[RMDB]
RNA sequence: GGGAACGACUCGAGUAGAGUCGAAAAUCUAACUCAUUCGUGAGUUAGAGUGAGCGCAGCGACCAUUGGGCCGGUGCCGCGCUGUCGGUGCCGCGCGUGGCGAUAGUGCUUGCUUCGGCAAGCACAACGAUUAAGUUAUUUUCGAAUAACUUAAUCGAAAAGAAACAACAACAACAAC
Reactivity to 2A3 in 0.01 (KOAc 150mM, MgCl2 10mM, bicine 150mM(pH8.5), 24C), signal-to-noise 9, nucleotides 027 to 126: u010c000u000a000a000c010u000c010a030u080u070c200g110u030g020a000g000u000u000a000g000a010g030u110g080a080g060c140g000c080a070g040c030g070a210c020c010a060u120u270g110g100g010c060c030g030g010u010g000c000c010g000c010g020c140u160g170u290c000g020g000u020g000c000c010g030c060g020c010g030u020g010g000c020g020a050u120a090g000u000g000c000u000u010g000c000u010u040c170g080g000c000a000a000g000c000a000c000a000a020
Reactivity to DMS in 0.01 (KOAc 150mM, MgCl2 10mM, bicine 150mM(pH8.5), 24C), signal-to-noise 9, nucleotides 027 to 126: u000c000u000a000a000c000u000c000a030u000u010c190g020u000g000a010g000u000u000a000g000a030g010u000g010a140g010c080g020c080a100g010c030g000a100c010c020a100u000u010g020g010g020c050c040g030g010u000g010c010c010g010c020g020c220u010g010u010c010g010g010u000g010c010c010g010c080g010c030g020u000g000g010c040g010a120u010a080g020u000g010c010u000u000g010c000u000u000c170g020g010c010a010a010g000c000a000c010a040a110
Source information:
An RNA of 177 nucleotides, treated with 2A3 and DMS and read out base by base. 2A3 adducts were read by reverse transcription with SuperScript II with manganese. In probing experiments dimethyl sulfate is read out at A N1 and C N3, which are open when not base-paired. For 2A3, 30,637 sequencing reads were counted.